[RMDB]
RNA sequence: GGGAACGACUCGAGUAGAGUCGAAAAGUCAUGCCUUCGGGCAUGACAGGUACCGAGAGGUACCAAAUAGCGUACAGUAGACGCAGACUGUACGCUAAAAAAGUGUGUGUUCAAUAAGGACCAAUUGAACACACACUAAAAUGGUCCAAGCGUGUGAUAAAUUUAUUUAGUUCGCUAAAUAAAUUUAAAAAGAAACAACAACAACAAC
Reactivity to 2A3 in 0.01 (KOAc 150mM, MgCl2 10mM, bicine 150mM(pH8.5), 24C), signal-to-noise 3, nucleotides 027 to 156: g010u000c000a000u010g000c000c000u040u080c250g050g000g020c010a000u000g010a000c000a000g010g000u000a000c010c010g010a030g010a010g060g000u000a000c000c000a000a080a020u050a000g000c000g000u000a000c000a010g010u030a010g040a130c040g010c060a000g030a010c000u000g000u010a000c000g000c000u010a020a010a010a000a010a020g010u020g000u010g000u010g000u000u010c020a030a020u120a130a140g130g040a070c060c060a030a050u010u020g000a000a010c000a000c000a000c000a000c010u000a000a000a000a010u090g040g000u010c020c020a040a020g030c040g040u060g010u020g050a060
Reactivity to DMS in 0.01 (KOAc 150mM, MgCl2 10mM, bicine 150mM(pH8.5), 24C), signal-to-noise 3, nucleotides 027 to 156: g020u000c000a000u000g020c000c010u000u000c300g050g050g000c010a000u020g000a010c030a000g010g010u000a020c000c010g030a300g000a300g030g010u000a010c010c000a020a040a100u000a020g010c020g020u000a020c000a020g010u010a090g000a090c080g020c060a210g010a050c010u000g020u000a000c020g000c000u000a000a030a080a090a030a040g020u000g020u000g000u000g020u000u010c000a020a020u010a060a070g000g040a150c050c080a290a050u010u010g000a010a010c000a020c000a000c000a000c010u000a010a030a100a140u000g020g020u000c050c040a120a220g020c060g020u020g010u000g000a180

Chemical mapping of a 207-nucleotide RNA with 2A3 and DMS. The reactions ran in a buffer of 150 mM KOAc, 10 mM MgCl2 and 150 mM bicine (pH 8.5), at 24 C.